[RMDB]
RNA sequence: GGGAACGACUCGAGUAGAGUCGAAAAGAAGAGAAGCGCGCGAAUUGGAAACCAGCGAACCUUAUUACGCGCGCAAGGAACCGGGCCUUGGUUCGUUGGAAAGAAUAGAUAAUGUCGCUGGUAAAGAGGUAUCCUAUAUCUUCGGAUAUAGGAUACCAAAAGAAACAACAACAACAAC
Reactivity to DMS in 0.01 (KOAc 150mM, MgCl2 10mM, bicine 150mM(pH8.5), 24C), signal-to-noise 3, nucleotides 027 to 126: g000a100a110g020a110g010a140a150g000c000g030c030g030c010g020a120a090u010u000g010g030a180a070a040c000c000a020g010c000g020a020a140c080c040u020u020a020u010u000a130c020g010c000g010c010g040c030a020a010g000g000a050a020c060c000g000g000g000c070c020u000u010g000g030u000u000c070g020u000u010g000g000a040a040a090g010a040a100u040a060g010a110u010a080a060u010g000u000c020g000c000u010g010g000u010a030a050a040g000a180
Reactivity to 2A3 in 0.01 (KOAc 150mM, MgCl2 10mM, bicine 150mM(pH8.5), 24C), signal-to-noise 5, nucleotides 027 to 126: g080a070a020g090a000g030a110a010g000c000g000c000g000c010g000a040a060u060u020g060g060a070a090a080c000c000a000g000c010g030a070a120c010c010u060u100a050u120u170a110c010g000c000g000c000g000c010a000a020g070g000a000a020c010c000g050g140g030c020c050u100u120g030g000u010u000c050g020u050u050g020g010a040a050a000g020a040a050u170a040g100a060u140a150a060u230g050u040c000g000c020u000g000g040u070a050a020a000g170a010